This 207-nucleotide RNA was probed chemically with DMS and 2A3. High DMS reactivity at an A or C suggests that its Watson-Crick edge is free. The 2A3 profile rests on 864 reads. For 2A3 the reverse transcriptase was SuperScript II with manganese.

RNA sequence: GGGAACGACUCGAGUAGAGUCGAAAAAUGAACAGGAAGAAGGAAGUUCCUUUUCCUCUAUUCCUGCUUCACGUUCUUGUAUAGAAAUUCCACUGGCAGAACCUAAUAGGACAUCAUCUGUAAAGAAGAACUUCAGUUUGCAGAGUUAGCCCCAGCAGGAGGUACUAUGAUUCGUCAUAGUACCUCCAAAAGAAACAACAACAACAAC
Reactivity to DMS in 0.01 (KOAc 150mM, MgCl2 10mM, bicine 150mM(pH8.5), 24C), signal-to-noise 1, nucleotides 027 to 156: a090u000g000a020a080c030a010g020g000a030a030g000a060a200g000g010a060a020g000u010u000c180c140u000u000u000u000c010c010u010c010u000a290u020u000c000c000u000g020c080u010u000c030a040c030g000u000u010c020u030u020g020u000a130u010a130g000a090a020a180u010u000c010c030a110c080u010g000g000c010a040g010a070a250c090c010u000a090a160u010a100g030g000a140c040a070u000c070a060u020c020u000g020u000a060a030a040g010a120a100g010a080a050c040u000u000c030a100g030u000u000u010g030c040a060g020a140g040u010u000a090g020c040c030c000c050a120g030c120a200
Reactivity to 2A3 in 0.01 (KOAc 150mM, MgCl2 10mM, bicine 150mM(pH8.5), 24C), signal-to-noise 2, nucleotides 027 to 156: a000u040g000a010a000c000a010g000g010a000a010g000a000a020g020g000a010a040g060u100u200c070c000u150u030u040u010c020c000u030c060u050a090u000u020c010c000u000g010c020u020u000c020a040c000g000u030u030c000u050u110g110u040a160u080a180g120a070a060a060u170u060c030c000a040c050u010g000g000c050a010g020a140a070c000c030u040a140a120u130a200g030g010a040c010a030u070c010a050u000c030u030g020u050a030a090a060g060a070a030g020a170a120c000u080u040c020a050g030u010u070u060g010c020a020g030a010g020u070u090a020g010c010c000c000c010a000g000c010a030